[RMDB]
RNA sequence: GGGAACGACUCGAGUAGAGUCGAAAAGAUAUGGAGUUAAUGACGGUCUAGACCGUUGAAAUCGGAAACGAUGGAGGUUCAGACCGCAAUGUUAACUCCUAAGUCAAAACCGCCCUUCGGGGCGGAACACUUAUAUCAUGUUCGCAUGAUAUAAGUGAAAAGAAACAACAACAACAAC
Reactivity to 2A3 in 0.01 (KOAc 150mM, MgCl2 10mM, bicine 150mM(pH8.5), 24C), signal-to-noise 5, nucleotides 027 to 126: g030a010u060a050u180g000g000a000g000u010u010a020a010u070g300a070c000g000g000u000c010u010a040g000a010c010c020g080u150u040g020a020a010a000u010c000g000g020a080a040a040c010g000a010u020g020g040a030g010g000u060u090c020a010g000a000c000c000g000c010a000a010u050g000u010u000a000a000c000u000c000c000u010a120a010g010u000c010a000a020a100a210c000c020g000c000c000c000u010u050c290g030g000g000g000c020g000g000a020a000
Reactivity to DMS in 0.01 (KOAc 150mM, MgCl2 10mM, bicine 150mM(pH8.5), 24C), signal-to-noise 6, nucleotides 027 to 126: g010a030u010a300u000g000g010a020g010u000u000a000a010u000g000a060c000g010g000u000c010u010a070g000a000c010c000g010u000u020g000a050a140a020u000c010g000g000a140a110a180c000g010a020u000g000g000a080g010g010u000u000c070a030g000a020c010c000g010c050a040a040u000g000u000u000a010a010c010u000c000c000u000a020a060g020u000c040a090a060a140a160c010c000g010c000c000c000u000u010c180g020g010g010g020c000g000g000a030a060
Chemical mapping of a 177-nucleotide RNA with 2A3 and DMS. Values cover nucleotides 27 to 126. Conditions: 150 mM KOAc, 10 mM MgCl2 and 150 mM bicine (pH 8.5), 24 C. DMS adducts were read by reverse transcription with MarathonRT. It was measured as part of the RMDB library TTRDEL.